[RMDB]
RNA sequence: GGGAACGACUCGAGUAGAGUCGAAAACGGCGCAGUUAGAGUCCAUGCUAUUGGACCAACUGUGAGUUGGGCCUUGAUGACCCAUUUUUGGGACUGAGAGCAACCAGGCCUUGGCUGCCAUCAGAACCAGUACUGCAAGUUUCGACUUGCAGUACUGAAAAGAAACAACAACAACAAC
Reactivity to DMS in 0.01 (KOAc 150mM, MgCl2 10mM, bicine 150mM(pH8.5), 24C), signal-to-noise 6, nucleotides 027 to 126: c050g000g020c050g020c010a000g020u000u000a090g010a150g020u000c000c000a030u000g020c210u030a130u010u000g000g010a010c020c020a020a000c000u000g010u000g000a110g010u010u000g000g010g010c050c000u000u000g000a150u010g000a070c010c000c010a080u000u000u010u010u000g010g000g000a250c020u000g010a050g000a300g000c020a020a040c030c010a070g010g030c210c120u000u000g010g010c030u000g000c000c070a200u000c030a020g000a080a190c100
Reactivity to 2A3 in 0.01 (KOAc 150mM, MgCl2 10mM, bicine 150mM(pH8.5), 24C), signal-to-noise 3, nucleotides 027 to 126: c030g140g000c030g040c010a000g000u000u080a140g030a090g060u000c000c000a030u110g130c070u300a210u300u050g000g000a000c010c000a000a010c000u020g020u030g030a010g030u060u060g040g000g000c010c010u020u110g070a110u130g050a100c010c020c020a040u180u200u060u190u090g020g020g000a010c020u030g040a020g000a000g060c010a000a030c010c030a020g180g040c000c080u030u040g030g000c020u030g000c040c010a070u030c020a030g020a040a040c030

This 177-nucleotide RNA was probed chemically with DMS and 2A3. The DMS profile rests on 6,898 reads. For DMS the reverse transcriptase was MarathonRT. For 2A3 the reverse transcriptase was SuperScript II with manganese.